Description
Chemical mapping of a 177-nucleotide RNA with DMS and 2A3. For 2A3, 26,523 sequencing reads were counted. The reactions ran in a buffer of 150 mM KOAc, 10 mM MgCl2 and 150 mM bicine (pH 8.5), at 24 C. The DMS profile rests on 9,562 reads. Reactivities are given for positions 27 through 126.

[RMDB]
RNA sequence: GGGAACGACUCGAGUAGAGUCGAAAAGAUAUGGAAUCGUGCAUGGGCGCAGGGAAAUUCGGAAACGAACACCCUGAACUACGCUCUGUGAUGCGAUUCCUAAGUCAAACCAGUCUUCGGACUGGAACGAUUAUACAUGGUUCGCCAUGUAUAAUCGAAAAGAAACAACAACAACAAC
Reactivity to DMS in 0.01 (KOAc 150mM, MgCl2 10mM, bicine 150mM(pH8.5), 24C), signal-to-noise 7, nucleotides 027 to 126: g020a040u000a300u000g000g010a020a010u000c010g030u010g020c040a040u010g000g000g000c000g030c000a020g010g000g010a020a060a300u000u000c000g010g000a140a090a150c010g010a020a010c280a300c030c000c000u010g000a070a070c090u000a290c020g000c000u010c000u000g020u000g000a100u000g010c000g000a010u000u000c000c000u000a030a080g020u000c040a060a100a160c010c000a000g000u000c010u000u010c160g020g010a010c000u010g000g000a050a070
Reactivity to 2A3 in 0.01 (KOAc 150mM, MgCl2 10mM, bicine 150mM(pH8.5), 24C), signal-to-noise 6, nucleotides 027 to 126: g020a020u060a040u160g010g000a000a000u000c010g000u020g020c020a050u050g020g000g000c030g000c020a000g030g000g010a090a220a000u040u020c010g010g030a080a050a050c010g000a010a020c040a070c060c000c000u000g020a040a040c080u160a040c050g000c020u040c020u080g040u020g050a300u110g000c010g000a000u000u000c000c000u010a060a010g020u020c020a030a020a110c000c000a000g000u000c010u040u120c300g150g010a010c010u010g000g000a010a020